An RNA of 177 nucleotides, treated with DMS and read out base by base. The DMS profile rests on 1,142 reads. DMS adducts were read by reverse transcription with MarathonRT.

RNA sequence: GGGAACGACUCGAGUAGAGUCGAAAAGAGACGGAGUUUCACCAUGUUGGCCAGGUUGGGCUCGAACUCCAGACCUCAGGUGAUCCACCUGCCUCAGCCUCCCACAGUGCUGGGAUUACAGGUGAGAAAUUGCUUCGCUUUUCGAAGCGAAGCAAUUAAAAGAAACAACAACAACAAC
Reactivity to DMS in 0.01 (KOAc 150mM, MgCl2 10mM, bicine 150mM(pH8.5), 24C), signal-to-noise 1, nucleotides 027 to 126: g000a050g020a120c130g000g010a050g000u010u000u000c080a060c020c070a150u020g000u010u000g020g000c020c030a120g010g000u000u000g000g000g030c050u000c100g010a050a030c000u000c010c010a060g000a130c080c040u000c060a050g020g020u000g010a120u020c070c030a060c000c010u000g000c100c010u010c000a000g000c010c040u000c090c100c070a030c200a090g010u000g010c010u010g000g000g010a110u000u010a070c080a030g000g010u010g000a100g000a060